[RMDB]
RNA sequence: GGGAACGACUCGAGUAGAGUCGAAAAGUAUUUCAGAAACUAUAGUCUUGUUGUAAAUUACCAUCACUUUUACCUGUUUGUUGUCGUAACAAACUACAAUAUUAAUGUAAAUUUGGUCCUGUAUUACAGGGUUAAGGCACGUUGUGAGGCACAUGUCAGGACUAUAAAAGUUCGCUUUUAUAGUCCUAAAAGAAACAACAACAACAAC
Reactivity to 2A3 in 0.01 (KOAc 150mM, MgCl2 10mM, bicine 150mM(pH8.5), 24C), signal-to-noise 3, nucleotides 027 to 156: g000u000a110u060u170u200c100a090g090a070a190a060c090u090a090u120a180g030u000c030u050u040g020u000u000g010u070a010a160a150u160u130a040c060c050a030u080c060a020c030u080u100u070u110a000c000c040u030g000u100u050u010g010u020u010g120u100c080g050u060a000a060c020a070a100a070c010u070a070c040a040a110u070a040u300u290a070a050u110g020u040a030a080a140u040u030u030g000g020u060c020c000u040g010u050a170u060u130a040c000a000g040g010g010u070u050a070a040g050g010c040a000c030g050u070u060g020u040g000a080g030g000c100a050c020a100u130g000u090c070
Reactivity to DMS in 0.01 (KOAc 150mM, MgCl2 10mM, bicine 150mM(pH8.5), 24C), signal-to-noise 1, nucleotides 027 to 156: g040u000a130u020u000u000c070a140g020a200a150a100c090u010a120u000a100g040u010c030u000u010g000u020u000g030u000a030a100a090u000u010a080c060c050a080u000c010a080c010u000u000u000u000a080c010c040u010g020u000u000u000g030u000u010g000u000c080g020u000a050a040c060a080a050a030c010u000a150c030a040a100u010a160u000u000a060a150u010g010u000a020a080a100u030u000u010g010g020u000c010c020u000g040u000a210u010u020a060c010a020g000g050g010u010u000a020a060g010g010c010a070c110g030u000u000g010u020g000a100g010g010c030a070c060a010u000g000u010c110

This 207-nucleotide RNA was probed chemically with 2A3 and DMS.
DMS (dimethyl sulfate) methylates the pairing face of unpaired adenines and cytosines.
2A3 adducts were read by reverse transcription with SuperScript II with manganese.
Reactivities are given for positions 27 through 156.
It was measured as part of the RMDB library OK3TST.